[RMDB]
RNA sequence: GGGAACGACUCGAGUAGAGUCGAAAAGUAAAGGCGUGUGAGAAGAUCACAGAAUGCCAAAAGCACGCUUAGAAACGGACAUCUCUGAGCAAAAGUGCACGCAAUAAGCGAAAGAUGCCGAAAAAAAGAAUCAAUCUAUGUUCGCAUAGAUUGAUUCAAAAGAAACAACAACAACAAC
Reactivity to 2A3 in 0.01 (KOAc 150mM, MgCl2 10mM, bicine 150mM(pH8.5), 24C), signal-to-noise 5, nucleotides 027 to 126: g080u080a040a070a100g030g000c050g000u020g000u020g010a060g020a170a100g040a060u020c010a020c010a090g120a090a080u190g030c010c000a040a080a000a000g010c000a000c020g000c010u030u010a030g050a030a110a020c030g000g070a010c010a020u010c020u000c020u060g020a010g000c000a030a080a140a020g070u030g000c040a010c050g000c010a050a290u190a300a060g000c020g050a100a070a010g020a010u030g000c020c020g120a070a020a000a000a000a000a000
Reactivity to DMS in 0.01 (KOAc 150mM, MgCl2 10mM, bicine 150mM(pH8.5), 24C), signal-to-noise 4, nucleotides 027 to 126: g010u010a050a090a120g020g030c000g020u000g030u000g000a020g010a160a080g000a120u000c010a020c010a090g020a140a080u020g000c000c030a040a090a080a140g000c010a040c030g000c000u000u000a030g010a060a050a110c050g000g000a090c030a050u000c020u000c030u000g000a100g010c040a090a040a080a180g010u000g010c070a090c050g010c050a070a080u000a070a100g020c030g010a100a080a110g010a050u000g010c000c010g010a000a010a040a090a050a080a150